[RMDB]
RNA sequence: GGGAACGACUCGAGUAGAGUCGAAAAUCCACUAUGAAUCUAGUCACUAAAUAAACACAAUUAGCUACUGUGUGUAAUAGUCAGUGUUGAUAACACAAAAUAAUAGUAUAGUUUUGGAAGAUUAUACGCGCCCUUGCUCCGUUCGCGGAGCAAGGAAUCUAAAUCCCUAGUUCGCUAGGGAUUUAGAAAAAGAAACAACAACAACAAC
Reactivity to DMS in 0.01 (KOAc 150mM, MgCl2 10mM, bicine 150mM(pH8.5), 24C), signal-to-noise 2, nucleotides 027 to 156: u010c020c010a100c120u020a060u000g000a190a090u000c100u000a120g000u000c060a080c020u000a010a060a060u000a100a210a080c010a050c030a040a070u000u000a190g000c150u000a030c030u000g020u010g010u000g000u000a110a220u000a060g000u000c070a150g010u000g000u000u000g000a150u000a060a160c030a070c040a040a050a080a080u010a080a300u000a050g000u000a040u000a010g000u000u000u010u030g010g000a210a170g000a020u000u000a020u000a000c040g030c130g020c050c000c020u000u000g000c000u000c010c000g010u000u010c300g020c050g040g000a000g010c020a000a010g010g000a010a010
Reactivity to 2A3 in 0.01 (KOAc 150mM, MgCl2 10mM, bicine 150mM(pH8.5), 24C), signal-to-noise 3, nucleotides 027 to 156: u000c010c010a040c040u100a070u200g100a120a050u100c050u060a050g080u100c030a000c050u040a050a070a140u140a070a160a020c040a000c010a050a110u110u070a020g020c020u120a070c060u030g010u000g000u010g030u090a030a020u010a020g000u030c130a070g010u010g020u040u040g060a220u210a280a000c010a000c020a020a130a050a010u140a050a040u050a110g000u010a000u020a040g000u000u020u100u130g080g050a120a040g000a070u010u000a070u010a020c020g020c010g060c040c020c000u000u000g000c000u000c020c000g010u080u050c070g020c020g100g000a000g000c010a000a000g000g000a000a000